[RMDB]
RNA sequence: GGGAACGACUCGAGUAGAGUCGAAAAAGUCUACUUUUCGAAGUAGACUGUGCUCCCACUUGAUCGAGGUCUCACCGUGUCAUUGCCCACGACACUGGGGCGUAAUAGAUUGGUUCGCCAAUCUAAAUGACCUUCCAUAGUUCGCUAUGGAAGGUCAAAAAGAAACAACAACAACAAC
Reactivity to 2A3 in 0.01 (KOAc 150mM, MgCl2 10mM, bicine 150mM(pH8.5), 24C), signal-to-noise 1, nucleotides 027 to 126: a010g000u000c000u000a000c040u080u030u020u090c190g090a020a020g000u020a000g010a010c020u000g020u050g030c020u030c010c000c000a030c040u070u210g100a100u120c050g040a040g000g160u000c010u020c040a080c070c060g000u000g030u040c030a050u020u200g120c000c040c000a050c040g020a010c000a020c050u030g000g000g000g000c020g040u030a100a090u040a040g020a010u000u000g000g000u000u030c150g020c040c010a000a000u000c000u010a000a060a100
Reactivity to DMS in 0.01 (KOAc 150mM, MgCl2 10mM, bicine 150mM(pH8.5), 24C), signal-to-noise 3, nucleotides 027 to 126: a020g000u000c000u000a000c000u000u000u000u010c170g020a020a020g000u000a010g010a010c010u000g000u000g020c190u030c000c010c010a130c140u010u010g000a090u000c090g020a080g000g000u000c000u010c040a080c190c070g020u000g000u000c010a300u000u010g000c060c030c040a150c230g000a020c040a030c010u000g030g010g000g030c100g020u010a100a100u000a010g000a020u000u000g000g000u000u010c230g020c010c000a010a000u010c000u010a000a110a100